Description
Conditions: 150 mM KOAc, 10 mM MgCl2 and 150 mM bicine (pH 8.5), 24 C. The record gives the reactivity of an RNA of 177 nucleotides to DMS and 2A3.
RNA sequence: GGGAACGACUCGAGUAGAGUCGAAAAGAUAUGGAUCCAAGCAACAGCGACCGGUCGGAAACGACCGUGUCGACAUGCUUGAAUCCUAAGUCAAACAACUACAGAGGGUUCGCCCUCUGUAGUUGAACAACAAUCUUUGGUUCGCCAAAGAUUGUUGAAAAGAAACAACAACAACAAC
Reactivity to DMS in 0.01 (KOAc 150mM, MgCl2 10mM, bicine 150mM(pH8.5), 24C), signal-to-noise 5, nucleotides 027 to 126: g000a020u000a140u000g000g000a010u000c010c000a010a000g000c000a020a230c300a150g020c010g000a010c000c010g000g000u000c000g000g000a030a030a070c000g000a000c010c000g010u010g010u000c000g010a060c150a110u000g000c000u000u000g000a010a010u000c000c000u000a020a090g000u000c010a120a130a300c010a000a010c000u000a000c000a000g000a010g000g000g010u000u010c240g020c010c000c000u000c000u000g010u000a000g000u000u010g000a070a140
Reactivity to 2A3 in 0.01 (KOAc 150mM, MgCl2 10mM, bicine 150mM(pH8.5), 24C), signal-to-noise 2, nucleotides 027 to 126: g000a010u040a020u050g000g000a000u010c020c010a000a010g000c000a020a160c060a290g080c010g020a010c000c000g010g000u000c010g000g020a030a020a010c000g000a010c020c020g000u050g000u010c000g050a050c020a040u020g000c000u010u010g010a010a010u000c000c000u000a010a000g010u000c000a070a080a220c000a010a070c010u000a000c000a000g010a000g060g030g010u090u120c200g140c010c000c000u000c000u010g000u000a000g000u000u010g000a000a010
The 2A3 profile rests on 8,030 reads. The DMS profile rests on 5,857 reads. 2A3 adducts were read by reverse transcription with SuperScript II with manganese.